[RMDB]
RNA sequence: GGGAACGACUCGAGUAGAGUCGAAAAGAUAUGGACGUCAGAACUACGCUGGGGUCACUGGGAGAGGAGGAUCGGAAACGAUCCUCUACCCACCUCCCAGUGACCAUAGCGCUGACGUCCUAAGUCACAUGAUGUAUAUCUUCGGAUAUACAUCAUGAAAAGAAACAACAACAACAAC
Reactivity to 2A3 in 0.01 (KOAc 150mM, MgCl2 10mM, bicine 150mM(pH8.5), 24C), signal-to-noise 4, nucleotides 027 to 126: g040a020u080a050u200g000g010a000c000g010u010c000a020g030a260a170c260u300a070c300g010c010u040g180g050g030g040u000c010a000c010u000g000g010g000a010g000a010g000g010a010g000g000a000u010c010g030g000a060a060a020c010g000a000u010c010c000u010c000u010a010c000c010c010a030c000c010u000c010c000c000a000g000u010g000a000c000c000a010u020a000g000c000g000c000u000g000a000c010g000u010c000c000u000a010a000g010u000c000a020
Reactivity to DMS in 0.01 (KOAc 150mM, MgCl2 10mM, bicine 150mM(pH8.5), 24C), signal-to-noise 8, nucleotides 027 to 126: g020a060u000a300u000g010g010a010c010g020u000c000a010g000a130a060c180u010a300c030g020c000u000g010g010g000g000u010c010a010c020u000g000g000g000a030g000a110g010g000a020g000g010a010u000c000g020g000a090a100a210c010g010a010u000c000c010u000c000u000a010c060c060c150a300c120c000u000c000c010c000a020g010u000g000a020c010c010a020u000a000g000c020g000c000u000g000a010c000g010u000c000c000u000a000a050g010u000c040a300
Annotation
Structure probing data (2A3 and DMS) for a 177-nucleotide construct. 2A3 adducts were read by reverse transcription with SuperScript II with manganese. Conditions: 150 mM KOAc, 10 mM MgCl2 and 150 mM bicine (pH 8.5), 24 C. The 2A3 profile rests on 32,085 reads.